[RMDB]
RNA sequence: GGGAACGACUCGAGUAGAGUCGAAAACUAUAGCACUUCGGUGCUAUAGAAAAGAAAGGUCCAAAAGGAGCAAACGACUGCAAGAAAAACUGUCGAAAUGCAAAACCUUUCCCUUCGGGGAAAGGAACUAUAGUCCCAUGUUCGCAUGGGACUAUAGAAAAGAAACAACAACAACAAC
Reactivity to DMS in 0.01 (KOAc 150mM, MgCl2 10mM, bicine 150mM(pH8.5), 24C), signal-to-noise 2, nucleotides 027 to 126: c000u000a000u000a000g010c000a000c010u000u000c180g040g010u000g000c000u000a000u000a010g000a080a070a080a160g000a090a090a140g040g010u000c000c020a110a030a070a130g000g040a230g000c050a050a070a300c000g000a020c000u010g010c100a010a130g020a030a110a090a110a030c020u010g010u000c000g030a090a060a100u000g000c030a080a070a210a080c000c000u000u000u010c010c000c000u000u020c280g030g020g000g010a010a010a000g010g000a010a040
Reactivity to 2A3 in 0.01 (KOAc 150mM, MgCl2 10mM, bicine 150mM(pH8.5), 24C), signal-to-noise 2, nucleotides 027 to 126: c000u000a000u000a000g040c000a010c000u060u040c250g030g000u000g000c000u010a000u010a010g000a010a030a000a000g070a020a050a020g110g020u010c050c010a110a080a000a080g130g080a180g050c040a080a070a080c010g070a020c060u120g240c300a150a010g180a160a100a010a010a010c030u020g000u000c000g010a140a060a040u070g010c000a010a020a030a140c000c020u010u000u000c030c000c000u040u070c200g010g000g000g000a010a000a000g000g010a000a010
Chemical mapping of a 177-nucleotide RNA with DMS and 2A3. The DMS profile rests on 1,006 reads. The RNA was probed in 150 mM KOAc, 10 mM MgCl2 and 150 mM bicine (pH 8.5) at 24 C. It was measured as part of the RMDB library M2PK50. For 2A3, 1,252 sequencing reads were counted. Values are in units of 0.01, from 0 to 300, in steps of 10.